[RMDB]
RNA sequence: GGGAACGACUCGAGUAGAGUCGAAAAGAUAUGGAUAAAGAAUGCCUCGACCGAUUAUGGGAGGCAACAUUCGGAAACGAAUGCUGCCGAGGAUCAUACUCGGUCGAGGCAUUCUUUAUCCUAAGUCCAUUAAGCUAGGGUUCGCCCUAGCUUAAUGAAAAGAAACAACAACAACAAC
Reactivity to DMS in 0.01 (KOAc 150mM, MgCl2 10mM, bicine 150mM(pH8.5), 24C), signal-to-noise 2, nucleotides 027 to 126: g010a120u010a300u010g010g000a000u000a010a000a010g000a010a000u000g020c000c000u000c010g000a020c010c000g010a020u000u000a000u000g000g010g000a030g030g020c000a000a000c000a010u000u000c000g010g000a130a130a280c000g000a010a010u000g010c030u000g030c000c000g020a090g020g000a040u020c000a000u000a000c100u000c000g000g010u000c000g010a000g010g010c000a000u000u000c000u000u000u000a000u000c000c000u000a010a080g010u000c040